[RMDB]
Chemical mapping of a 177-nucleotide RNA with 2A3 and DMS. The RNA was probed in 150 mM KOAc, 10 mM MgCl2 and 150 mM bicine (pH 8.5) at 24 C. It was measured as part of the RMDB library M2PK50.
RNA sequence: GGGAACGACUCGAGUAGAGUCGAAAACGUAGAUACUUCGGUAUCUACGAAAAUAUCGCUGGCGUGGGACACAGCCGGAGCUAGCCUCGGAUAGUCUCAGUAAAACAGCAUGGUUCGCCAUGCUGAAGAGAAGGAGGUUGUUCGCAACCUCCUUCUCAAAAGAAACAACAACAACAAC
Reactivity to 2A3 in 0.01 (KOAc 150mM, MgCl2 10mM, bicine 150mM(pH8.5), 24C), signal-to-noise 1, nucleotides 027 to 126: c000g010u000a010g000a000u000a010c040u040u050c240g090g000u000a000u000c000u000a010c000g000a000a020a010a000u100a020u020c030g050c130u040g020g000c160g080u080g030g030g000a010c040a010c030a090g020c020c010g140g010a030g000c050u110a030g020c000c020u030c020g040g010a040u040a130g020u000c010u000c030a060g110u160a010a080a070a090c000a000g010c000a010u010g030g040u070u050c150g010c070c020a000u020g000c020u000g000a020a010
Reactivity to DMS in 0.01 (KOAc 150mM, MgCl2 10mM, bicine 150mM(pH8.5), 24C), signal-to-noise 1, nucleotides 027 to 126: c000g020u020a010g010a000u000a000c000u000u010c160g040g050u010a000u000c000u000a000c010g010a030a110a020a080u000a030u000c060g040c030u000g000g020c110g000u010g010g010g000a100c060a120c120a110g010c010c100g010g000a100g000c040u060a080g030c040c030u000c020g020g000a060u000a090g000u000c020u010c010a050g010u010a050a040a060a150c000a000g000c000a000u010g000g000u000u000c180g000c010c000a010u010g010c000u000g010a020a040